[RMDB]
The record gives the reactivity of an RNA of 177 nucleotides to 2A3 and DMS.
RNA sequence: GGGAACGACUCGAGUAGAGUCGAAAACUUUGUGUCUACUCUUCUCAACUAAACGAAAUUUUUCUAGUGCUGGUAUGUAUAAUGCCAGUACUGGUGUAAUUGAAAUUUCGCCAGGUUCGUAAAGUGGACGAUCUGUCUAAUUCGUUAGACAGAUCGUAAAAGAAACAACAACAACAAC
Reactivity to 2A3 in 0.01 (KOAc 150mM, MgCl2 10mM, bicine 150mM(pH8.5), 24C), signal-to-noise 9, nucleotides 027 to 126: c020u060u050u130g090u050g020u000c010u020a020c010u020c010u070u060c050u020c040a020a030c010u070a070a010a010c000g010a010a000a010u010u020u010u060u020c000u010a000g000u000g000c010u000g000g010u010a010u020g080u010a100u120a300a010u040g000c000c000a000g000u000a000c000u000g000g000u070g010u080a110a190u080u210g060a020a010a010u000u010u000c010g010c010c020a070g010g040u010u050c040g030u080a040a040a050g020u030g020g030
Reactivity to DMS in 0.01 (KOAc 150mM, MgCl2 10mM, bicine 150mM(pH8.5), 24C), signal-to-noise 5, nucleotides 027 to 126: c040u000u010u010g000u010g010u010c010u010a030c010u010c060u000u000c070u010c080a030a030c030u000a050a180a300c010g010a020a010a010u010u000u010u010u010c000u000a010g020u000g000c010u010g000g010u000a000u000g000u070a100u060a090a030u000g000c000c000a000g010u000a000c000u000g000g000u010g010u010a070a070u050u020g000a010a010a010u000u000u000c000g010c030c020a300g000g000u000u010c160g020u010a050a040a040g010u000g000g000
Record summary: Reactivities are given for positions 27 through 126. It was measured as part of the RMDB libraries RFM100 and RFMREP. The reactions ran in a buffer of 150 mM KOAc, 10 mM MgCl2 and 150 mM bicine (pH 8.5), at 24 C.